[RMDB]
RNA sequence: GGGAACGACUCGAGUAGAGUCGAAAAGUAGCACUUCGGUGCUACAAAAAAGCGUACUACACAAGCUGGAUCGAAGAACUUUCGAACUACUCCCAAAUAGGAGCGAAAGGGAGAUCCAGCCUUGUGUAUCGCAAAAAUGACCGAUUCGUCGGUCAAACGCCAUUACACGAUUCGUCGUGUAAUGGCGAAAAGAAACAACAACAACAAC
Reactivity to 2A3 in 0.01 (KOAc 150mM, MgCl2 10mM, bicine 150mM(pH8.5), 24C), signal-to-noise 1, nucleotides 027 to 156: g000u000a000g010c030a010c030u070u070c300g110g030u010g000c020u010a000c020a000a110a000a000a000a000g030c090g040u060a080c010u000a000c030a000c000a000a000g000c000u000g000g000a000u000c000g090a160a000g000a060a060c010u020u000u000c000g050a070a050c030u190a030c030u160c020c000c000a230a260a180u300a120g000g010a050g050c020g000a020a000a020g000g030g010a050g000a000u000c000c000a000g020c000c000u000u000g000u000g000u000a000u050c000g000c020a040a040a040a040a040u050g000a000c000c000g000a010u020u040c210g090u000c030g100g000u070c040a020a020a020
Conditions: 150 mM KOAc, 10 mM MgCl2 and 150 mM bicine (pH 8.5), 24 C.
Chemical mapping of a 207-nucleotide RNA with 2A3.